[RMDB]
This 177-nucleotide RNA was probed chemically with 2A3 and DMS.
Source: RMDB library RFM100, as collected in RNAgym.
The RNA was probed in 150 mM KOAc, 10 mM MgCl2 and 150 mM bicine (pH 8.5) at 24 C.
RNA sequence: GGGAACGACUCGAGUAGAGUCGAAAACGGCGGACGCGGUGCCCGCGGAUCCCGGGUGCUGCGGCUUAUGGAGGCGGCCCUCCCAAGAGCGGCGGCCGCAGAGGCAUCCAGCCCUCACCCCCCGAUCUGUGAUCUAUUUGUUCGCAAAUAGAUCACAAAAAGAAACAACAACAACAAC
Reactivity to 2A3 in 0.01 (KOAc 150mM, MgCl2 10mM, bicine 150mM(pH8.5), 24C), signal-to-noise 7, nucleotides 027 to 126: c020g040g000c040g030g020a020c010g010c010g010g010u030g010c010c000c010g020c070g050g030a090u120c040c020c000g000g010g000u010g000c010u010g000c010g020g020c000u070u080a100u100g090g030a060g010g050c020g030g000c010c010c010u070c030c040c030a180a070g040a010g080c110g040g000c020g050g010c000c010g000c010a040g020a030g060g000c010a020u030c020c010a030g020c010c000c030u050c040a070c000c000c000c000c010c010g010a060u020c020
Reactivity to DMS in 0.01 (KOAc 150mM, MgCl2 10mM, bicine 150mM(pH8.5), 24C), signal-to-noise 4, nucleotides 027 to 126: c190g010g000c060g010g000a300c000g000c030g000g010u000g030c000c000c010g020c200g000g010a040u010c050c050c000g000g030g010u000g000c010u000g000c020g030g010c050u010u020a150u030g020g000a200g000g020c030g010g030c010c020c030u020c010c060c070a100a100g010a100g010c140g010g000c300g020g000c000c030g030c050a020g000a050g010g030c050a130u050c060c060a130g000c000c000c050u030c100a270c000c020c030c000c010c010g000a120u050c130